RNA sequence: GGGAACGACUCGAGUAGAGUCGAAAAUGAUCCGAUUGACACCGCUGUUUGCACGCAUCGCUGGUUGUCCAGUGUACGCGAGGGAUCACACCGGCAUUUGCCAAGAUAGCAGCUACUGCCACCGGAAUAGUCGCAGUGGGUUCGCCCACUGCGACUAAAAAGAAACAACAACAACAAC
Reactivity to 2A3 in 0.01 (KOAc 150mM, MgCl2 10mM, bicine 150mM(pH8.5), 24C), signal-to-noise 1, nucleotides 027 to 126: u130g000a080u000c030c000g060a130u080u110g190a180c170a070c020c020g030c020u050g070u100u000u160g130c080a130c040g040c000a000u000c030g000c000u040g000g110u170u300g060u020c000c000a070g070u060g050u170a000c070g000c010g180a100g070g000g090a020u080c000a070c000a000c000c000g010g000c100a160u030u090u150g000c000c010a000a050g050a020u070a080g000c010a030g050c060u020a020c060u000g000c010c000a030c010c000g140g000a040a110